[RMDB]
RNA sequence: GGGAACGACUCGAGUAGAGUCGAAAAGAUAUGGACGCUUCAACAGCCCACGGUAUCGGAAACGAUAUUGGGACAUGAAGGGUCCUAAGUCAAAACAAAUCAGGACGCUUCGGCGUCCUGAUUUGAACAUAUAACUGAACUUCGGUUCAGUUAUAUGAAAAGAAACAACAACAACAAC
Reactivity to DMS in 0.01 (KOAc 150mM, MgCl2 10mM, bicine 150mM(pH8.5), 24C), signal-to-noise 8, nucleotides 027 to 126: g000a040u010a300u010g000g000a010c010g000c000u000u010c000a040a070c260a220g010c000c010c000a090c300g000g000u000a000u000c000g000g000a130a080a170c000g000a000u000a000u000u000g000g000g000a040c040a150u000g000a010a010g000g000g000u000c000c000u000a000a070g000u000c030a070a060a130a200c010a010a010a000u000c000a020g000g010a010c000g020c000u000u010c210g020g000c000g010u000c010c000u000g000a000u000u000u000g010a090a210
Reactivity to 2A3 in 0.01 (KOAc 150mM, MgCl2 10mM, bicine 150mM(pH8.5), 24C), signal-to-noise 5, nucleotides 027 to 126: g000a020u050a030u090g000g000a020c050g100c300u020u010c020a100a120c050a170g090c010c010c050a100c190g100g000u020a010u000c000g000g010a060a040a030c000g010a000u000a020u030u070g000g010g030a040c040a090u080g010a000a010g080g010g000u020c000c000u010a050a020g020u000c020a000a020a080a220c000a000a010a000u010c000a000g000g000a010c000g010c020u100u180c300g150g000c000g020u010c000c000u000g000a000u000u000u000g000a000a000
Conditions: 150 mM KOAc, 10 mM MgCl2 and 150 mM bicine (pH 8.5), 24 C. This 177-nucleotide RNA was probed chemically with DMS and 2A3. It was measured as part of the RMDB library TTRDEL. For 2A3 the reverse transcriptase was SuperScript II with manganese.